[RMDB]
RNA sequence: GGGAACGACUCGAGUAGAGUCGAAAAGAAGUGGCAGGGACAUGCCCCAUAAGCUCGUUCUAGCAACAUAUGUUUGGCUAGUUCGAGCGAUUAGUCUUGAGGAGCGUCCUCUCGCCUGUUUACGAGAGGACCUCCCUGGCUUCGGCCAGGGAGGUCCAAAAGAAACAACAACAACAAC
Reactivity to 2A3 in 0.01 (KOAc 150mM, MgCl2 10mM, bicine 150mM(pH8.5), 24C), signal-to-noise 2, nucleotides 027 to 126: g130a140a010g070u020g080g000c020a010g020g010g040a050c060a080u180g040c000c000c030c000a040u020a030a050g000c000u000c030g050u030u010c000u000a000g000c000a040a000c030a100u220a020u260g070u050u020u040g170g000c000u000a000g000u000u000c010g000a000g000c000g000a000u000u150a000g050u040c080u080u070g030a100g030g020a150g030c100g000u020c000c000u050c000u000c000g010c000c000u000g090u010u070u140a070c040g000a000g040a060
Reactivity to DMS in 0.01 (KOAc 150mM, MgCl2 10mM, bicine 150mM(pH8.5), 24C), signal-to-noise 2, nucleotides 027 to 126: g060a110a090g020u010g000g000c010a040g030g000g020a090c010a120u090g090c040c000c010c120a130u000a170a170g000c000u000c000g000u000u000c000u000a000g020c010a020a020c070a230u040a080u010g000u080u000u000g000g000c020u000a000g010u000u000c040g000a010g000c030g000a000u040u010a030g000u000c050u000u020g000a200g000g000a150g010c220g000u000c030c000u000c030u000c030g000c060c060u000g020u000u040u020a110c040g000a030g000a140